[RMDB]
Chemical mapping of a 177-nucleotide RNA with DMS and 2A3.
Values cover nucleotides 27 to 126.
The DMS profile rests on 3,471 reads.
DMS adducts were read by reverse transcription with MarathonRT.
Source: RMDB library RFM100, as collected in RNAgym.
The reactions ran in a buffer of 150 mM KOAc, 10 mM MgCl2 and 150 mM bicine (pH 8.5), at 24 C.
RNA sequence: GGGAACGACUCGAGUAGAGUCGAAAACGCCGUCUUUCCGCCCAGGGACCGCCCCCGAUCUUGGGCAUAAGAUUCGUGUGCGUUGGCCCGGUCCUUUCGGUUCCGGAUUCCUCAGCCCCCAGCCCCCCAAUUUACGGCGAUUCGUCGCCGUAAAUUGAAAAGAAACAACAACAACAAC
Reactivity to DMS in 0.01 (KOAc 150mM, MgCl2 10mM, bicine 150mM(pH8.5), 24C), signal-to-noise 2, nucleotides 027 to 126: c030g040c000c010g000u000c000u000u000u010c140c060g000c010c020c020a040g010g000g000a030c070c150g000c020c000c010c020c020g000a050u000c010u010u000g000g000g000c050a040u000a010a040g000a060u030u060c140g060u020g000u030g030c020g040u000u020g000g000c110c000c010g030g030u030c070c040u030u030u000c010g000g010u010u010c000c010g000g000a160u000u010c010c020u010c090a100g000c040c010c000c010c010a130g000c030c000c000c030c040
Reactivity to 2A3 in 0.01 (KOAc 150mM, MgCl2 10mM, bicine 150mM(pH8.5), 24C), signal-to-noise 2, nucleotides 027 to 126: c020g040c010c000g020u020c020u040u070u020c070c090g010c000c000c000a010g020g050g000a030c030c080g050c040c010c000c010c020g040a060u040c020u030u020g050g000g020c010a000u050a020a020g020a020u110u210c080g020u090g070u090g110c030g010u000u040g000g000c010c000c000g000g000u030c020c000u070u110u160c130g050g000u130u000c000c010g000g050a040u060u020c010c020u040c050a040g000c010c000c000c000c010a010g010c030c030c000c000c010